An RNA of 177 nucleotides, treated with 2A3 and DMS and read out base by base. For DMS the reverse transcriptase was MarathonRT. 2A3 adducts were read by reverse transcription with SuperScript II with manganese. The RNA was probed in 150 mM KOAc, 10 mM MgCl2 and 150 mM bicine (pH 8.5) at 24 C.
RNA sequence: GGGAACGACUCGAGUAGAGUCGAAAAUACGUGACCUUCGGGUCACGUAACCGGGGUUCCCAAGUCAAAAAGAGAGACGCAAUCUCGACAGCGGCCUUUUCGUAUGAGUUGCUUUCGAGCAACUCAAGUUGUUAUCUCCUUUCGAGGAGAUAACAACAAAAGAAACAACAACAACAAC
Reactivity to 2A3 in 0.01 (KOAc 150mM, MgCl2 10mM, bicine 150mM(pH8.5), 24C), signal-to-noise 2, nucleotides 027 to 126: u040a000c010g010u000g020a010c000c000u010u020c280g070g000g000u010c020a000c010g010u000a000a000c020c020g000g040g040g000u020u000c000c000c000a010a010g130u080c050a070a030a040a090a020g040a010g000a000g020a030c030g040c070a060a120u060c020u040c080g060a080c030a030g040c020g050g020c000c040u040u110u090u100c070g030u130a110u200g010a010g000u000u010g000c010u050u050u150c210g090a000g000c000a010a020c000u000c000a010a000
Reactivity to DMS in 0.01 (KOAc 150mM, MgCl2 10mM, bicine 150mM(pH8.5), 24C), signal-to-noise 3, nucleotides 027 to 126: u000a000c000g010u010g010a020c000c000u010u010c200g010g010g020u000c000a010c000g000u000a010a060c030c020g030g000g000g000u000u000c000c000c010a130a110g010u020c170a040a080a040a060a080g000a090g010a020g010a080c040g010c090a070a110u000c040u000c100g010a070c170a050g000c070g000g000c080c030u000u000u000u000c060g000u010a120u000g010a010g010u000u000g020c000u010u010u010c190g000a000g000c010a000a000c000u000c000a020a040